This 177-nucleotide RNA was probed chemically with 2A3 and DMS. It was measured as part of the RMDB library TTRDES. For DMS the reverse transcriptase was MarathonRT.
[RMDB]
RNA sequence: GGGAACGACUCGAGUAGAGUCGAAAAGAUAUGGAUCCGAAGUAGACAUGCUCGAAGGGUCGGAAACGACCCAAGAGCAACAGCUACCGGAUCCUAAGUCAAAGAGAAGCGCUUCGGCGCUUCUCAACUAAGUACAAAACUUCGGUUUUGUACUUAGAAAAGAAACAACAACAACAAC
Reactivity to 2A3 in 0.01 (KOAc 150mM, MgCl2 10mM, bicine 150mM(pH8.5), 24C), signal-to-noise 1, nucleotides 027 to 126: g000a030u050a050u110g000g000a010u000c000c020g060a300a000g000u000a010g040a040c120a300u300g040c010u000c040g060a150a260g010g010g000u010c010g000g010a040a010a000c000g010a010c010c000c010a000a010g000a000g000c000a010a000c030a000g010c000u000a010c000c000g000g020a000u000c000c010u000a010a000g030u000c040a130a160a060g000a000g030a010a000g000c000g000c090u060u180c300g090g010c000g030c000u000u000c010u000c000a020a010
Reactivity to DMS in 0.01 (KOAc 150mM, MgCl2 10mM, bicine 150mM(pH8.5), 24C), signal-to-noise 2, nucleotides 027 to 126: g010a040u000a150u000g010g000a020u000c010c020g000a170a290g010u000a020g000a040c030a300u010g050c000u000c010g000a260a140g010g010g030u000c000g040g000a030a030a110c000g030a000c000c000c000a000a180g000a020g010c000a000a000c230a110g000c000u000a000c010c000g010g020a040u000c000c000u000a000a100g000u000c010a100a130a240g020a000g000a040a000g030c000g060c010u010u010c270g020g000c000g050c010u000u000c000u000c000a040a170